[RMDB]
RNA sequence: GGGAACGACUCGAGUAGAGUCGAAAAGGAAUGGAGAUUAACAAGUGGGAAGGACAAGCUGAGGCACUAGACAAACAGAUCCAAGUGCAUCCUCACUUGCACUUGGGCCAGCAAUUUUUAAGCUCCAUCCUGUAAAAACGUUCGCGUUUUUACAGGAAAAAGAAACAACAACAACAAC
Reactivity to 2A3 in 0.01 (KOAc 150mM, MgCl2 10mM, bicine 150mM(pH8.5), 24C), signal-to-noise 2, nucleotides 027 to 126: g070g020a030a000u030g020g010a060g040a030u070u120a100a010c070a040a040g060u090g010g040g050a090a080g070g050a030c030a020a070g060c080u010g030a040g080g090c040a040c130u070a060g030a050c060a060a210a000c030a110g030a090u000c000c010a020a000g010u000g010c000a030u030c000c010u090c020a090c080u040u040g000c020a000c000u010u000g000g010g000c010c000a000g010c020a030a010u020u130u040u000u040a080a040g020c000u000c020c010a020
Reactivity to DMS in 0.01 (KOAc 150mM, MgCl2 10mM, bicine 150mM(pH8.5), 24C), signal-to-noise 3, nucleotides 027 to 126: g010g000a100a060u000g010g020a060g000a050u000u000a030a070c210a100a050g000u010g010g000g010a090a100g000g010a050c100a050a050g020c130u030g000a090g030g050c050a080c090u000a060g020a090c150a100a070a100c190a060g000a040u000c010c010a020a010g020u000g010c010a010u000c100c070u000c110a040c080u010u000g010c060a010c000u000u000g000g010g000c050c020a060g000c100a060a030u010u000u000u000u010a040a080g010c020u000c020c010a070